[RMDB]
RNA sequence: GGGAACGACUCGAGUAGAGUCGAAAAGAUAUGGACCAACGAACUACUUGACAACAGCAUCGAUCGUAUCUUCUAUCGGAAACGAUAGAAGAUACGGGAGCUGCUAAUCAAGCGUUGGUCCUAAGUCCACUUCGGAUAAGUUCGCUUAUCCGAAGUGAAAAGAAACAACAACAACAAC
Reactivity to DMS in 0.01 (KOAc 150mM, MgCl2 10mM, bicine 150mM(pH8.5), 24C), signal-to-noise 2, nucleotides 027 to 126: g010a090u010a300u050g000g020a030c010c010a010a010c010g000a160a080c140u030a300c000u000u000g010a040c170a110a130c250a010g060c000a210u000c100g010a190u000c000g020u000a000u000c000u010u000c000u000a010u000c020g000g000a140a100a230c000g030a010u010a000g030a000a000g010a000u000a010c000g000g000g000a300g030c070u000g000c000u000a140a240u020c030a010a010g000c000g000u010u000g000g000u000c020c000u000a000a050g020u000c040
Reactivity to 2A3 in 0.01 (KOAc 150mM, MgCl2 10mM, bicine 150mM(pH8.5), 24C), signal-to-noise 2, nucleotides 027 to 126: g040a020u120a060u210g000g010a010c000c020a010a000c000g050a100a070c100u270a050c000u300u050g000a030c070a220a030c000a250g000c000a170u270c010g120a080u100c000g000u000a000u040c000u000u000c010u000a000u000c000g020g010a130a030a090c020g000a010u000a000g010a000a000g020a010u000a010c010g010g000g010a010g000c000u000g000c000u060a030a100u040c010a020a000g020c000g010u000u000g000g020u000c000c000u000a000a000g000u040c040
Chemical mapping of a 177-nucleotide RNA with DMS and 2A3. For 2A3, 3,435 sequencing reads were counted. The RNA was probed in 150 mM KOAc, 10 mM MgCl2 and 150 mM bicine (pH 8.5) at 24 C. For 2A3 the reverse transcriptase was SuperScript II with manganese.